RNA sequence: GGGAACGACUCGAGUAGAGUCGAAAACACUUUACAAAGCAGACUACUCGGGCCCUGCCACCCAGAUUCUCACACAUAAAAACCAAGGUGGAAUGGAGAGUCCAAGGACAGUUGGUGGAUGCUUGUGUAAAAGUGCUGGGAAACUUGCCUCUGGCUGGAGAACUACGUAAUUCGUUACGUAGUUCUCAAAAGAAACAACAACAACAAC
Reactivity to 2A3 in 0.01 (KOAc 150mM, MgCl2 10mM, bicine 150mM(pH8.5), 24C), signal-to-noise 5, nucleotides 027 to 156: c020a010c020u070u100u100a080c080a050a070a010g020c020a030g060a180c030u030a020c020u070c040g040g020g000c020c010c030u030g020c020c020a030c020c020c010a030g020a130u140u030c050u050c030a060c010a010c030a060u190a190a150a070a080a060c050c040a070a060g070g030u040g030g060a060a050u080g040g010a040g000a030g040u000c030c030a060a040g050g030a100c040a100g060u120u080g070g020u020g020g020a030u030g010c010u110u080g070u020g020u120a010a050a060a090g020u020g020c040u030g010g030g000a060a090a060c040u070u100g020c020c040u070c080u150g040g000c050u050g060
Reactivity to DMS in 0.01 (KOAc 150mM, MgCl2 10mM, bicine 150mM(pH8.5), 24C), signal-to-noise 2, nucleotides 027 to 156: c040a070c020u000u000u000a170c020a060a070a040g020c030a050g010a220c010u010a080c010u010c010g040g000g010c050c010c040u000g000c010c040a120c010c030c040a170g020a070u000u000c030u000c020a130c070a200c120a080u000a030a090a070a140a080c040c000a130a110g000g040u000g010g000a110a120u000g000g000a070g010a050g000u020c040c010a020a060g010g020a120c060a090g010u000u010g020g020u000g020g030a220u000g010c010u000u000g010u010g020u000a060a040a050a070g020u000g000c020u000g010g010g010a080a080a110c050u000u020g020c010c030u010c020u000g010g030c100u010g000